[RMDB]
RNA sequence: GGGAACGACUCGAGUAGAGUCGAAAACAUAAUAAAUGCAUUUACAGCAAUUCUCUUCCUAGGAGCAUCCCACGACCCACACACACCAGAACUAUAUACAAUCAACUUCGUACUAAAAACACUCGCAUUAACAAUCACCUUCCUAUGAAUCCGAGCAGUCAGACAAAUGGUUCGCCAUUUGUCUGACAAAAGAAACAACAACAACAAC
Reactivity to 2A3 in 0.01 (KOAc 150mM, MgCl2 10mM, bicine 150mM(pH8.5), 24C), signal-to-noise 2, nucleotides 027 to 156: c010a040u270a200a060u090a050a210a040u160g000c010a030u070u090u190a100c080a010g050c010a040a090u210u020c040u000c000u060u050c010c010u040a040g040g040a060g020c010a020u010c010c000c010a000c010g120a070c010c040c000a010c000a000c020a000c000a010c110c030a010g020a040a010c030u030a010u060a040u030a180c130a120a070u050c010a060a080c040u080u110c060g010u080a120c040u170a070a120a140a110a030c030a010c000u050c010g060c010a040u010u110a090a020c010a100a080u040c000a010c010c020u010u020c020c000u060a050u040g060a020a010u000c010c040g000a040g030c080a040
Structure probing data (2A3) for a 207-nucleotide construct. Source: RMDB library PDB130, as collected in RNAgym. The RNA was probed in 150 mM KOAc, 10 mM MgCl2 and 150 mM bicine (pH 8.5) at 24 C. The 2A3 profile rests on 582 reads.